[RMDB]
RNA sequence: GGGAACGACUCGAGUAGAGUCGAAAACUGGUGCUCUUGAGAACUUGUGAUGUCAUCAGAGAGAAGGACAAGAAUGUGAGCCCGUGAGACACAGCAGAGUAAGGGGCAGACCUGCAGGCGGCAGGGAUGCUGUAUCUUUUUUCGAAAAGAUACAGCAAAAAGAAACAACAACAACAAC
Reactivity to 2A3 in 0.01 (KOAc 150mM, MgCl2 10mM, bicine 150mM(pH8.5), 24C), signal-to-noise 6, nucleotides 027 to 126: c020u030g030g030u060g020c010u020c020u100u120g100a070g040a180a050c040u080u060g050u050g110a110u080g050u090c030a070u030c060a090g070a020g010a020g040a160a040g050g010a010c020a050a040g120a100a110u160g060u040g060a020g040c000c020c020g030u060g040a070g020a010c020a000c000a040g070c010a000g040a010g090u070a050a060g020g000g020g000c000a010g040a050c000c000u020g010c010a060g130g080c050g040g010c000a010g020g000g000a020
Reactivity to DMS in 0.01 (KOAc 150mM, MgCl2 10mM, bicine 150mM(pH8.5), 24C), signal-to-noise 9, nucleotides 027 to 126: c040u000g010g030u000g000c030u000c030u000u010g010a120g010a100a080c070u010u000g020u010g010a100u000g010u000c040a080u000c060a080g010a110g010a090g010a080a080g010g000a060c070a050a090g010a090a090u000g010u000g010a110g010c030c030c030g010u010g010a080g010a070c060a060c080a090g010c040a060g000a080g010u020a080a080g000g000g000g020c050a070g000a110c040c020u000g010c040a100g010g010c130g010g000c020a020g010g010g010a110

Source: RMDB library OK2TRN, as collected in RNAgym. Structure probing data (2A3 and DMS) for a 177-nucleotide construct. The 2A3 profile rests on 8,675 reads. Reactivities are rounded to 0.1 and cut off at 0 and 3.